The data come from the RNA Mapping Database (RMDB), library M2RFOK. This 207-nucleotide RNA was probed chemically with 2A3 and DMS. For 2A3 the reverse transcriptase was SuperScript II with manganese. The 2A3 profile rests on 10,699 reads. The reactions ran in a buffer of 150 mM KOAc, 10 mM MgCl2 and 150 mM bicine (pH 8.5), at 24 C. The DMS profile rests on 8,452 reads.
[RMDB]
RNA sequence: GGGAACGACUCGAGUAGAGUCGAAAAGCGGGUCUUGAAACGCGGGUAGCGCGCACGCCCGGCGAAGAAGUUCGCAUACGCGGUGUGCUGGUGCCGAAGUGUCUGCUGCAACGGCACGCUCGACACCUAGAACAUACCGUAUUCGUACGGUAUGUAAGUAGAUUAAUUACUUCGGUAAUUAAUCUACAAAAGAAACAACAACAACAAC
Reactivity to 2A3 in 0.01 (KOAc 150mM, MgCl2 10mM, bicine 150mM(pH8.5), 24C), signal-to-noise 7, nucleotides 027 to 156: g030c030g000g030g000u040c040u110u120g070a100a080a030c060g000c030g000g020g030u080a050g040c040g000c000g000c070a000c010g010c000c000c000g010g000c010g000a010a010g070a060a050g170u040u020c010g000c020a040u080a250c040g030c140g040g010u010g000u000g000c020u060g050g020u020g000c010c010g030a060a030g020u030g030u070c070u110g060c040u060g030c040a060a040c040g010g000c010a000c030g010c050u020c010g040a040c020a050c020c010u030a050g050a110a000c000a000u000a000c000c000g010u000a010u020u060c130g050u020a000c000g000g000u000a000u010g000u000a040a020
Reactivity to DMS in 0.01 (KOAc 150mM, MgCl2 10mM, bicine 150mM(pH8.5), 24C), signal-to-noise 3, nucleotides 027 to 156: g010c010g000g030g020u000c020u000u010g020a090a080a070c060g010c020g000g020g050u010a080g020c040g020c080g020c000a050c020g020c000c000c010g020g010c000g000a030a060g010a210a190g000u000u000c020g000c050a120u000a250c030g010c080g030g030u000g030u000g010c000u010g020g010u010g020c000c000g000a050a150g010u000g010u000c040u000g010c060u010g020c110a140a110c100g010g000c010a020c020g000c030u000c000g010a070c030a050c000c000u000a170g010a130a080c000a010u000a000c000c010g000u000a030u000u010c300g030u000a010c000g010g000u000a000u000g020u000a020a140